[RMDB]
RNA sequence: GGGAACGACUCGAGUAGAGUCGAAAAGAGGUUUUUAUUAAACUGUCUAAAAAUGACUCGCCAAAGUCAUUGGUUAAUUUCUAAGUACAGACAUAAUUUACCAUAGAUUUUUUAAUUGAACCGAUAACAGCUAAGAUGAAUUCGUUCAUCUUAGCUGAAAAGAAACAACAACAACAAC
Reactivity to 2A3 in 0.01 (KOAc 150mM, MgCl2 10mM, bicine 150mM(pH8.5), 24C), signal-to-noise 6, nucleotides 027 to 126: g180a090g010g040u050u020u020u050u070a010u010u010a000a010a000c000u000g010u000c000u030a060a120a020a010a020u000g010a000c000u020c060g210c090c030a120a100a000g000u000c000a000u010u020g000g010u020u040a010a020u030u060u030c070u080a160a160g090u060a240c070a100g090a040c020a120u230a030a020u020u020u050a010c000c000a010u010a030g000a030u000u000u000u000u000u030a000a000u010u020g010a000a000c000c010g030a030u070a160a010
Reactivity to DMS in 0.01 (KOAc 150mM, MgCl2 10mM, bicine 150mM(pH8.5), 24C), signal-to-noise 3, nucleotides 027 to 126: g000a210g000g010u000u010u010u030u010a010u000u010a010a020a010c020u010g000u000c000u010a010a120a140a060a010u010g010a010c000u000c120g000c260c260a130a130a020g000u000c010a020u020u000g010g000u000u000a000a030u030u000u020c090u030a070a160g000u030a170c180a060g000a100c300a100u010a020a010u000u000u020a020c010c000a300u010a000g010a010u000u000u010u000u000u000a010a000u000u000g010a020a010c000c000g000a160u000a070a150

Conditions: 150 mM KOAc, 10 mM MgCl2 and 150 mM bicine (pH 8.5), 24 C. This 177-nucleotide RNA was probed chemically with 2A3 and DMS. It was measured as part of the RMDB libraries RFM100 and RFMREP.